[RMDB]
Chemical mapping of a 177-nucleotide RNA with 2A3 and DMS. The reactions ran in a buffer of 150 mM KOAc, 10 mM MgCl2 and 150 mM bicine (pH 8.5), at 24 C.
RNA sequence: GGGAACGACUCGAGUAGAGUCGAAAAGAAAGAAAGAAAAGCCAAACUCCUCCUGCAGCUCUGGUGGAAAAUGGAGAAGACUUUUCCUUUCCUCCAUCUCCCCCAGGGCCUGGUGGAGUAAGGCGAACCGUUGAGAUAACUUCGGUUAUCUCAACGGAAAAGAAACAACAACAACAAC
Reactivity to 2A3 in 0.01 (KOAc 150mM, MgCl2 10mM, bicine 150mM(pH8.5), 24C), signal-to-noise 4, nucleotides 027 to 126: g130a030a050a000g110a020a100a020g120a010a140a010a000g000c010c000a020a040a070c000u000c000c000u030c000c000u070g050c150a040g000c010u000c000u010g000g000u000g010g020a030a020a000a020u010g010g000a010g010a050a030g060a100c080u170u110u160u210c040c000u070u050u050c030c000u000c010c000a000u010c000u000c020c000c000c000c010a000g010g000g000c000c000u000g000g000u010g000g000a000g000u000a000a000g000g000c000g020a010a000
Reactivity to DMS in 0.01 (KOAc 150mM, MgCl2 10mM, bicine 150mM(pH8.5), 24C), signal-to-noise 2, nucleotides 027 to 126: g000a030a080a120g020a040a130a060g040a020a080a110a290g030c000c000a010a300a030c000u050c000c000u000c000c000u010g000c210a220g030c000u010c000u010g000g010u000g000g000a000a030a210a050u000g030g000a000g070a050a030g000a130c300u000u070u060u020c120c050u000u020u010c100c000u010c000c000a050u000c030u000c030c000c090c000c010a000g000g000g000c000c000u000g010g020u000g000g000a030g000u000a010a200g020g000c040g000a040a040
For DMS, 1,709 sequencing reads were counted.